[RMDB]
RNA sequence: GGGAACGACUCGAGUAGAGUCGAAAAGCUCGGAGACGAGCAAGGCUGACAAAACUCUGUCCCAACCUCCACGUGGUGUCGGCUGGAUAAUGCUGCAUUAUGUUGCAUUUAUCAACUGGGAACGAAAACCGCACUACCACUUCGGUGGUAGUGCGGUAAAAGAAACAACAACAACAAC
Reactivity to 2A3 in 0.01 (KOAc 150mM, MgCl2 10mM, bicine 150mM(pH8.5), 24C), signal-to-noise 1, nucleotides 027 to 126: g000c010u000c010g010g000a080g000a020c000g000a000g000c090a000a060g000g000c080u050g000a030c000a000a080a120a030c020u010c090u050g070u000c010c070c000a000a000c030c080u080c000c040a020c080g030u020g000g090u050g020u020c040g070g030c040u060g130g000a040u040a030a030u000g000c030u000g000c000a010u120u130a160u300g030u000u050g000c030a000u050u140u090a100u110c010a000a000c000u070g000g010g240a000a000c090g130a110a010a010

Background
This 177-nucleotide RNA was probed chemically with 2A3. The reactions ran in a buffer of 150 mM KOAc, 10 mM MgCl2 and 150 mM bicine (pH 8.5), at 24 C. For 2A3, 432 sequencing reads were counted. The data come from the RNA Mapping Database (RMDB), library OK1LIB.